[RMDB]
RNA sequence: GGGAACGACUCGAGUAGAGUCGAAAACCGUAGGUAUAGGGUUUGGACUUGGAUUUACUCACCUAAGACAGUAGCAUUCGAAAGAGUGCUAUCGAGGUGAGUUGUCAGUCUGAUCCUAUACCUAAACGGAAAACCGAUCGACUUCGGUCGAUCGGAAGUCCAUGAAGAGGUUCGCCUCUUCAUGGACAAAAGAAACAACAACAACAAC
Reactivity to 2A3 in 0.01 (KOAc 150mM, MgCl2 10mM, bicine 150mM(pH8.5), 24C), signal-to-noise 2, nucleotides 027 to 156: c000c000g050u020a020g000g000u010a010u000a000g030g010g050u050u110u300g090g060a010c030u050u170g100g010a050u230u210u170a020c000u020c000a010c000c010u070a160a080g080a040c040a040g030u000a000g000c000a000u010u000c030g060a150a080a040g010a040g010u010g000c000u000a000u060c010g020a010g000g000u010g000a020g000u000u020g000u010c000a000g000u000c000u010g000a000u010c020c000u000a000u000a000c000c000u000a000a000a000c010g020g040a060a110a000a000c000c000g000a010u000c000g000a000c020u110u070c300g080g000u000c000g000a000u000c000g000g010a000a020